[RMDB]
RNA sequence: GGGAACGACUCGAGUAGAGUCGAAAAGUCAUAGUCUGUGGCGGCCUUGAACUCCUGGGCACAAGCAGUCCUGCCACCUCAGUCUCCCAAGUAGCUGGGAUGACAGGUGCAUGCCACCAUGCCUAGCUAAUAUUUUAAUUUUUUGUAGAGACAGGGACACUACGAUUUAUUUCGAUAAAUCGUAGUGAAAAGAAACAACAACAACAAC
Reactivity to DMS in 0.01 (KOAc 150mM, MgCl2 10mM, bicine 150mM(pH8.5), 24C), signal-to-noise 1, nucleotides 027 to 156: g000u000c070a080u010a070g020u010c040u000g040u000g010g010c060g030g000c020c060u010u000g000a030a080c050u000c030c030u020g020g020g010c090a120c120a080a050g000c050a080g010u000c010c020u000g000c000c000a040c010c010u010c020a030g020u000c000u000c020c040c090a030a140g010u000a090g010c060u000g020g010g010a060u010g000a070c080a030g000g020u010g050c050a090u010g020c040c000a020c030c030a100u000g000c010c020u000a040g020c020u020a050a060u000a090u000u010u000u010a080a070u000u000u000u000u000u000g030u010a080g010a140g010a070c030a070g020g000g000a240
Reactivity to 2A3 in 0.01 (KOAc 150mM, MgCl2 10mM, bicine 150mM(pH8.5), 24C), signal-to-noise 3, nucleotides 027 to 156: g050u070c030a060u100a080g050u010c040u060g040u080g030g010c050g020g000c010c000u020u030g040a100a040c030u020c070c040u040g000g020g010c020a020c040a060a040g010c020a030g030u040c000c020u050g000c030c000a030c020c000u030c010a020g020u030c000u000c020c010c000a050a020g070u060a020g050c010u010g000g010g010a060u090g020a020c040a070g010g020u030g020c030a040u120g040c040c000a000c010c000a040u070g050c000c000u010a020g010c020u020a060a040u060a150u100u130u060u140a120a230u100u060u050u040u050u090g030u040a020g000a000g010a000c020a030g030g010g000a010